[RMDB]
RNA sequence: GGGAACGACUCGAGUAGAGUCGAAAACCGAACUAUCUUAAGGCAAGUCUCGGAAGACGUGUAGAAUAGCUGUCAGCUGCAGGUGACGCCAGCAUUCCUUAAGGUUUCGGCGACUAGGUGACUGGCGCAUGCCGCAUUUGUUCGCAAAUGCGGCAUGAAAAGAAACAACAACAACAAC
Reactivity to 2A3 in 0.01 (KOAc 150mM, MgCl2 10mM, bicine 150mM(pH8.5), 24C), signal-to-noise 6, nucleotides 027 to 126: c020c000g020a050a030c060u080a040u090c030u060u110a070a010g050g000c030a050a100g050u050c010u030c090g050g080a080a020g010a060c070g040u020g030u070a070g030a210a090u100a120g020c030u050g060u120c030a030g040c030u030g000c020a030g010g040u030g070a030c020g010c010c000a010g000c010a040u070u090c000c000u060u130a090a070g080g000u040u030u110c080g070g010c040g030a050c050u030a030g080g000u040g060a140c010u020g000g010c010g000
Reactivity to DMS in 0.01 (KOAc 150mM, MgCl2 10mM, bicine 150mM(pH8.5), 24C), signal-to-noise 4, nucleotides 027 to 126: c000c010g020a120a100c190u040a030u020c020u000u010a070a110g000g000c110a090a100g010u040c010u000c130g020g000a170a040g020a050c030g030u010g000u000a080g010a060a070u020a040g000c030u030g010u020c020a050g000c030u000g010c050a050g010g010u000g000a110c040g000c000c000a060g000c040a060u020u020c020c010u010u020a040a090g000g020u000u000u000c080g010g040c060g000a110c080u010a030g000g020u010g000a110c000u000g000g010c030g010

The record gives the reactivity of an RNA of 177 nucleotides to 2A3 and DMS. For DMS, 7,058 sequencing reads were counted. The RNA was probed in 150 mM KOAc, 10 mM MgCl2 and 150 mM bicine (pH 8.5) at 24 C.